[RMDB]
RNA sequence: GGGAACGACUCGAGUAGAGUCGAAAAAUCGUCCCCACAUAGCAGAACCCAGGACCCCCUUCCAAAGUGACCGAGGGGGGAGCUUGGAACGUGGGGGACCAGUGGAGCCAUGGGAUGCUCUUCCCGAUCUAACCAGUAUGUUCGCAUACUGGUUAGAAAAAGAAACAACAACAACAAC
Reactivity to 2A3 in 0.01 (KOAc 150mM, MgCl2 10mM, bicine 150mM(pH8.5), 24C), signal-to-noise 2, nucleotides 027 to 126: a000u060c010g010u060c000c010c020c000a040c030a020u180a030g110c120a010g070a120a000c010c010c000a000g010g010a030c000c010c020c010c050u030u000c010c010a160a110a100g130u100g140a030c030c060g000a000g040g000g050g020g010g000a000g040c000u000u010g000g000a000a010c030g010u070g040g010g020g010g000a020c020c020a030g080u070g110g030a010g000c060c050a190u190g170g040g050a060u120g040c030u040c000u010u020c000c000c000g000a030
Reactivity to DMS in 0.01 (KOAc 150mM, MgCl2 10mM, bicine 150mM(pH8.5), 24C), signal-to-noise 3, nucleotides 027 to 126: a080u010c200g010u000c000c000c000c020a090c040a080u000a140g010c180a130g030a140a170c160c000c010a010g020g010a160c000c000c000c010c020u000u010c030c080a050a110a140g020u000g010a050c220c200g000a020g010g000g010g000g010g000a030g010c020u000u000g000g030a040a120c090g030u000g000g010g000g000g010a020c020c070a050g040u000g010g010a020g000c000c070a210u000g040g010g020a300u010g000c000u000c000u000u000c000c000c000g010a160
Chemical mapping of a 177-nucleotide RNA with 2A3 and DMS. The RNA was probed in 150 mM KOAc, 10 mM MgCl2 and 150 mM bicine (pH 8.5) at 24 C. DMS adducts were read by reverse transcription with MarathonRT.